[RMDB]
RNA sequence: GGGAACGACUCGAGUAGAGUCGAAAAACGUUUUGAAAAACGAGCCAGGGAGUGUGCCUGUUUGACGAGUCUAACCGGAGUAUCCGGGAAGGCGUAGGGAAACCAAUAUGGCCGCAGCAUUGCGAGGUAUCCAACACGGAUUCGUCCGUGUUGGAUAAAAAGAAACAACAACAACAAC
Reactivity to 2A3 in 0.01 (KOAc 150mM, MgCl2 10mM, bicine 150mM(pH8.5), 24C), signal-to-noise 3, nucleotides 027 to 126: a000c020g010u020u010u040u190g210a130a080a030a000a000c020g000a010g040c000c000a040g010g000g000a090g100u070g010u100g060c020c030u060g120u050u040u080g060a060c010g010a000g010u000c020u040a020a020c020c000g000g000a060g120u120a150u100c000c000g000g010g010a030a030g020g020c020g000u050a040g010g000g020a050a060a010c070c000a020a010u180a140u160g020g000c000c030g000c010a040g120c070a100u060u080g000c000g030a010g080g040
Reactivity to DMS in 0.01 (KOAc 150mM, MgCl2 10mM, bicine 150mM(pH8.5), 24C), signal-to-noise 3, nucleotides 027 to 126: a110c050g010u000u010u030u010g000a070a040a050a060a040c020g000a120g000c060c040a170g000g000g000a060g000u010g010u020g010c010c010u000g000u000u020u010g010a090c070g000a190g000u000c020u010a030a280c020c020g000g000a300g010u030a100u020c000c000g000g000g000a160a030g000g000c020g000u030a140g010g010g000a070a050a110c070c070a080a100u010a070u000g010g000c000c000g020c070a040g020c130a090u010u020g000c030g010a080g000g010